[RMDB]
RNA sequence: GGGAACGACUCGAGUAGAGUCGAAAAUACAUCAGCAUGAUUCUGGGGGCCUGGAUCAAUGGCCUCUUUUGGGCUUUGAUGCCUAUUGUUGGGUGGGCUAGUUAUGCCCCAGAUCCUACUGGGGCCAAUCCUGUGGCUAAUUCGUUAGCCACAGGAUAAAAGAAACAACAACAACAAC
Reactivity to DMS in 0.01 (KOAc 150mM, MgCl2 10mM, bicine 150mM(pH8.5), 24C), signal-to-noise 2, nucleotides 027 to 126: u020a100c060a060u000c020a070g020c050a060u000g000a090u010u010c090u000g000g010g010g000g010c030c060u010g000g020a150u010c250a090a070u010g010g010c010c010u000c090u000u000u000u000g010g010g020c010u010u000u010g000a070u000g000c030c020u000a090u010u000g010u010u000g010g000g020u000g020g010g000c120u000a080g000u020u010a130u010g010c000c000c000c020a010g000a060u020c080c110u000a160c000u000g000g000g000g030c000c300a050